Overview
This 177-nucleotide RNA was probed chemically with 2A3 and DMS. Conditions: 150 mM KOAc, 10 mM MgCl2 and 150 mM bicine (pH 8.5), 24 C. The DMS profile rests on 1,313 reads.
RNA sequence: GGGAACGACUCGAGUAGAGUCGAAAACGCUCAAUAGCGACCUAAUCAAAGAGCGAGUUACAGAACAGGAGGUUCAGGAGACGCCGGUGCCAGCAUUCGAAUGCCUUAAGGUCGUACGCACUCCGAGAAAAAUUUAUAUAUUCGUAUAUAAAUUUUUAAAAGAAACAACAACAACAAC
Reactivity to 2A3 in 0.01 (KOAc 150mM, MgCl2 10mM, bicine 150mM(pH8.5), 24C), signal-to-noise 1, nucleotides 027 to 126: c010g000c000u030c020a040a160u150a160g070c000g000a020c000c030u130a110a080u180c040a150a060a060g030a000g020c040g010a030g010u100u100a080c080a080g060a100a000c040a070g080g020a060g080g000u080u050c000a010g040g020a040g020a040c040g010c010c050g070g010u030g000c000c070a030g010c000a050u020u100c020g030a220a030u110g030c010c030u060u060a060a060g040g010u000c020g000u040a010c000g010c000a100c020u000c010c050g030a040g120
Reactivity to DMS in 0.01 (KOAc 150mM, MgCl2 10mM, bicine 150mM(pH8.5), 24C), signal-to-noise 2, nucleotides 027 to 126: c100g010c000u000c050a050a160u030a100g010c010g010a170c010c000u000a150a110u050c140a110a090a190g010a030g040c010g010a140g050u050u010a070c070a070g010a070a060c110a120g010g000a050g010g000u030u010c030a110g000g000a140g000a110c110g000c080c010g000g030u000g000c060c050a120g000c070a050u020u020c090g000a140a050u010g010c000c020u050u010a080a030g000g030u030c030g020u010a040c100g000c070a050c030u010c050c020g000a230g010